[RMDB]
RNA sequence: GGGAACGACUCGAGUAGAGUCGAAAAAGAUAUAAUCCAAGGCUACCCGGCAAACUCAAGCCCAGGGUGAAAGACAGUCUGGUAGGUGGUGACCACAUCAGCUGAUUACUUCUUAUCAGCUGUCGUGCCGCAAUAAAAUUUUCGAAUUUUAUUGCGGAAAAGAAACAACAACAACAAC
Reactivity to 2A3 in 0.01 (KOAc 150mM, MgCl2 10mM, bicine 150mM(pH8.5), 24C), signal-to-noise 2, nucleotides 027 to 126: a000g110a010u070a000u050a300a050u000c020c020a030a040g030g000c040u030a020c000c010c000g040g000c030a100a120a080c140u160c160a080a020g030c000c010c070a050g010g000g020u050g030a070a040a010g000a020c000a000g010u050c020u000g040g000u020a010g000g040u020g000g000u010g010a010c050c000a010c000a080u250c070a060g000c070u000g010a030u010u020a020c000u040u020c010u020u000a010u020c000a010g010c010u000g000u000c000g020u040g050
Reactivity to DMS in 0.01 (KOAc 150mM, MgCl2 10mM, bicine 150mM(pH8.5), 24C), signal-to-noise 3, nucleotides 027 to 126: a070g000a150u020a090u010a090a100u010c020c020a090a100g020g000c030u000a110c020c020c030g000g020c040a080a070a100c140u010c140a090a130g020c030c000c090a110g000g000g000u000g000a060a090a090g000a020c030a010g000u010c010u000g010g010u000a000g010g020u010g010g000u000g010a020c040c010a010c020a150u000c170a110g000c170u010g000a020u000u000a040c070u000u010c030u000u000a020u000c000a000g000c010u000g010u000c020g010u010g020
Structure probing data (2A3 and DMS) for a 177-nucleotide construct.
For DMS the reverse transcriptase was MarathonRT.
The DMS profile rests on 2,419 reads.
Values cover nucleotides 27 to 126.